[RMDB]
RNA sequence: GGGAACGACUCGAGUAGAGUCGAAAACCACUGGGAGCAAGGCAUUAGGGCGUACCGUCGUUUCAGACGGUAUGUCUGCACGAACGCUUGAAGGCUGCUCGCCUGAGUUCGUGGGUAGCUGCUUGAGACUUCAUAUUCAGUUCGCUGAAUAUGAAGUAAAAGAAACAACAACAACAAC
Reactivity to DMS in 0.01 (KOAc 150mM, MgCl2 10mM, bicine 150mM(pH8.5), 24C), signal-to-noise 9, nucleotides 027 to 126: c010c010a220c150u020g010g010g000a040g000c030a090a080g010g010c040a110u010u020a130g010g000g000c000g020u000a000c000c000g010u000c000g010u010u020u040c270a110g000a020c000g010g000u000a000u000g010u000c000u000g000c030a010c010g000a010a010c010g010c230u010u030g010a080a030g000g010c010u010g010c210u020c190g010c000c010u000g000a100g010u000u000c010g020u000g000g010g010u010a080g020c040u000g000c020u000u000g000a130g010
Reactivity to 2A3 in 0.01 (KOAc 150mM, MgCl2 10mM, bicine 150mM(pH8.5), 24C), signal-to-noise 9, nucleotides 027 to 126: c010c010a030c080u110g070g070g020a030g020c030a100a090g120g000c030a070u090u230a110g010g030g010c000g000u000a000c000c000g000u010c020g030u060u230u280c070a050g000a000c000g000g000u000a000u000g000u000c000u000g000c000a000c010g010a020a000c010g030c070u060u130g080a020a010g020g000c020u120g060c060u170c180g010c010c000u040g020a050g020u010u030c010g000u010g000g040g050u070a030g010c020u030g020c010u040u050g030a030g040